An RNA of 177 nucleotides, treated with DMS and 2A3 and read out base by base.
The reactions ran in a buffer of 150 mM KOAc, 10 mM MgCl2 and 150 mM bicine (pH 8.5), at 24 C.
Reactivities are given for positions 27 through 126.
[RMDB]
RNA sequence: GGGAACGACUCGAGUAGAGUCGAAAAACAUAUGGCAUGUGGUCCGAAGAUCAUUAUCUUUUUGGAUGAACUUGAUGAUCCAAAUGUGAGAAUCAUUUUAGAAUGCAGAAUUUAAAUUACAACAUUGCCAAAUAGGUGAAUUCGUUCACCUAUUUGGAAAAGAAACAACAACAACAAC
Reactivity to DMS in 0.01 (KOAc 150mM, MgCl2 10mM, bicine 150mM(pH8.5), 24C), signal-to-noise 6, nucleotides 027 to 126: a070c070a070u010a110u020g010g020c020a040u000g010u010g010g000u020c020c020g000a040a030g010a030u000c190a050u010u050a140u000c020u010u000u000u000u020g030g010a040u000g000a070a070c080u010u010g010a090u010g000a090u010c000c010a030a070a100u020g010u020g010a070g000a160a040u010c020a030u010u000u000u010a090g000a090a030u000g010c050a090g010a090a090u010u010u020a040a060a070u020u030a090c120a070a060c120a050u010u020g020
Reactivity to 2A3 in 0.01 (KOAc 150mM, MgCl2 10mM, bicine 150mM(pH8.5), 24C), signal-to-noise 9, nucleotides 027 to 126: a000c050a040u160a070u120g100g010c020a020u020g040u050g110g010u000c010c020g020a030a010g010a020u070c050a100u070u270a060u060c050u040u100u030u100u160g030g000a010u030g040a060a050c030u050u070g040a030u060g010a020u060c010c000a070a100a120u160g060u070g010a030g020a030a020u040c020a010u000u020u040u070a120g040a090a020u030g030c040a020g070a080a030u060u120u140a120a150a070u150u100a030c030a060a000c030a100u040u190g040